[RMDB]
RNA sequence: GGGAACGACUCGAGUAGAGUCGAAAACGGUGUGGUCGUUGCUGUUCCAGCGGCUGCAGGCGGCCAAGACGUCGCGCUUUGUGCGGGGCUUUUUGGUUUUCCUGUCGCACUACAUCGUGCAGCGGGGGAAAGUAUUAUCGUUCGCGAUAAUACUUUCAAAAGAAACAACAACAACAAC
Reactivity to 2A3 in 0.01 (KOAc 150mM, MgCl2 10mM, bicine 150mM(pH8.5), 24C), signal-to-noise 5, nucleotides 027 to 126: c010g000g020u020g010u000g000g030u040c070g140u160u140g000c030u050g060u160u060c070c010a010g040c010g040g000c020u030g000c000a010g020g020c000g000g000c010c000a000a010g010a000c010g000u010c000g010c000g020c290u130u250u300g120u220g040c020g050g110g000g000c000u010u010u010u020u010g060g000u040u050u150u090c000c000u010g040u060c030g010c010a000c010u030a010c010a030u030c010g010u010g000c040a030g080c060g010g010g000g010
Reactivity to DMS in 0.01 (KOAc 150mM, MgCl2 10mM, bicine 150mM(pH8.5), 24C), signal-to-noise 9, nucleotides 027 to 126: c020g020g010u000g010u000g010g010u000c160g010u010u010g020c010u000g010u000u010c070c060a280g010c010g020g040c010u000g010c000a010g000g020c300g000g010c000c010a010a010g000a010c020g010u000c010g000c010g010c010u000u010u010g020u010g010c010g010g000g020g000c010u000u000u000u000u000g000g000u000u000u010u000c000c000u000g000u000c300g010c030a060c010u000a020c020a010u000c010g020u000g000c090a050g000c050g010g000g010g010
The record gives the reactivity of an RNA of 177 nucleotides to 2A3 and DMS.
It was measured as part of the RMDB library OK2TRN.
Reactivities are rounded to 0.1 and cut off at 0 and 3.
The DMS profile rests on 21,855 reads.